[RMDB]
RNA sequence: GGGAACGACUCGAGUAGAGUCGAAAAGGCUGAUUAUGUAGGGACGUGCGACGGAGUCCCUCAGCGUCAGCCUAACUCUUCGAAAAGAGACCUCCAUCGCACCGCAGUGAUUCUGUGCAAUCUUGCGCAGAGUUUGGCCCUUCGGGGCCAAACUCUGAAAAGAAACAACAACAACAAC
Reactivity to 2A3 in 0.01 (KOAc 150mM, MgCl2 10mM, bicine 150mM(pH8.5), 24C), signal-to-noise 1, nucleotides 027 to 126: g000g000c000u000g000a040u000u070a030u080g220u300a000g000g020g030a000c000g080u190g050c080g130a000c100g130g080a140g000u020c000c000c000u000c000a000g000c000g000u010c000a000g000c000c000u030a000a000c000u000c000u060u010c180g120a140a000a000a000g000a000g000a020c000c020u000c070c000a120u000c000g000c010a010c080c030g000c010a050g040u000g060a050u000u030c000u050g080u010g000c070a000a100u020c020u220u080g030c000g000
Structure probing data (2A3) for a 177-nucleotide construct. The reactions ran in a buffer of 150 mM KOAc, 10 mM MgCl2 and 150 mM bicine (pH 8.5), at 24 C. The data come from the RNA Mapping Database (RMDB), library RFM100.